This 177-nucleotide RNA was probed chemically with DMS and 2A3.
It was measured as part of the RMDB library OK2TST.
RNA sequence: GGGAACGACUCGAGUAGAGUCGAAAACGAUGUGGGCCUUGCCGGCUUCUGGCGGAUCGUCACCGACGAGCGCACGCUGAAGGCGCUUGAAACGAGCUUCGGCACCGCCUUCAUCGCUGCGCUGGUAUACUACGCAGGGAUUCGUCCCUGCGUAGUAAAAAGAAACAACAACAACAAC
Reactivity to DMS in 0.01 (KOAc 150mM, MgCl2 10mM, bicine 150mM(pH8.5), 24C), signal-to-noise 4, nucleotides 027 to 126: c070g010a090u000g000u010g000g000g020c030c020u010u020g010c100c070g000g000c040u000u010c070u000g010g010c040g000g000a040u010c040g010u000c080a150c070c060g000a050c030g000a020g010c020g020c000a030c010g010c110u000g010a040a010g000g020c000g010c100u000u000g020a040a080a130c170g010a120g010c130u000u000c100g020g010c030a090c300c020g010c000c020u000u000c020a000u000c010g010c240u000g010c020g020c020u000g010g020u000a160
Reactivity to 2A3 in 0.01 (KOAc 150mM, MgCl2 10mM, bicine 150mM(pH8.5), 24C), signal-to-noise 2, nucleotides 027 to 126: c020g040a050u100g050u110g090g000g060c020c020u050u110g060c040c040g110g000c020u110u050c050u070g070g000c040g000g030a050u030c020g020u000c050a040c080c070g000a030c030g050a010g040c050g000c010a010c010g000c010u000g010a000a010g040g030c030g050c000u040u180g080a080a070a030c080g030a050g070c020u080u080c080g050g000c030a010c030c000g010c000c000u030u000c010a010u010c000g010c130u000g000c010g000c000u040g000g050u070a050
DMS adducts were read by reverse transcription with MarathonRT. The reactions ran in a buffer of 150 mM KOAc, 10 mM MgCl2 and 150 mM bicine (pH 8.5), at 24 C.